[RMDB]
RNA sequence: GGGAACGACUCGAGUAGAGUCGAAAAGAAAGAAAGAAAGAAAGGUAUGAAGUCCUAUUCACACCUGAUAGGAUAAACUUCAUAUUGAUCGUGUAUGUGCUAACGCACAUACACGAAUGCGCAUGCAGAACUGCAUGCAUGAACAUAGGGUGUGCAAACCGCAUCCUACGUUCGCGUAGGAUGCGGUAAAAGAAACAACAACAACAAC
Reactivity to 2A3 in 0.01 (KOAc 150mM, MgCl2 10mM, bicine 150mM(pH8.5), 24C), signal-to-noise 1, nucleotides 027 to 156: g020a020a040a000g080a070a050a020g050a000a080a000g090a060a110a030g040g020u000a000u000g000a000a010g020u000c000c000u020a010u010u080c040a040c000a000c050c000u000g010a000u000a000g010g000a000u060a110a130a000c000u010u010c000a000u020a000u020u050g020a030u000c010g020u000g020u000a000u000g010u000g070c060u040a010a070c140g010c000a000c000a000u000a000c000a000c000g000a000a010u060g000c040g000c020a000u000g000c000a000g070a300a070c110u100g000c000a000u010g020c010a010u060g160a060a040c070a050u160a070g010g000g000u030g020u020g000c050a140a070

Source information
This 207-nucleotide RNA was probed chemically with 2A3. It was measured as part of the RMDB library OK3TST. The reactions ran in a buffer of 150 mM KOAc, 10 mM MgCl2 and 150 mM bicine (pH 8.5), at 24 C. Reactivities are given for positions 27 through 156.